[RMDB]
RNA sequence: GGGAACGACUCGAGUAGAGUCGAAAACUCAGAGUCCUCCUUGAUGGGGGCCUGAGAUGACAGAAAAACUACCUCGGGGAUAACUGGGUGGUCGCAGGCAAGAGCCCAUAUCGACCCUGCGGCUUGCAUGGUCUUGGUUAUUCGUAACCAAGACCAUAAAAGAAACAACAACAACAAC
Reactivity to 2A3 in 0.01 (KOAc 150mM, MgCl2 10mM, bicine 150mM(pH8.5), 24C), signal-to-noise 6, nucleotides 027 to 126: c000u000c000a000g020a040g060u090c000c000u020c000c040u170u250g120a300u280g030g000g000g000g000c000c000u020g000a000g000a020u120g020a010c040a040g200a060a090a020a010a020c020u040a030c010c030u060c040g010g010g000g020a090u100a190a110c030u040g050g030g030u040g010g010u010c020g000c000a010g000g000c020a060a010g030a010g060c050c080c040a070u140a050u120c010g020a040c000c000c000u010g000c000g000g010c000u000u070g020c020
Reactivity to DMS in 0.01 (KOAc 150mM, MgCl2 10mM, bicine 150mM(pH8.5), 24C), signal-to-noise 4, nucleotides 027 to 126: c010u000c000a040g000a120g020u030c000c020u010c000c000u000u030g020a170u020g020g000g020g010g000c020c000u000g000a000g000a080u030g010a080c100a150g010a050a040a070a150a190c050u000a040c100c030u000c030g030g010g000g000a060u000a070a180c060u020g000g000g000u010g000g020u000c010g020c000a010g000g000c040a040a240g010a070g000c170c060c150a100u030a100u010c010g000a300c300c000c010u000g010c010g020g000c010u000u000g020c090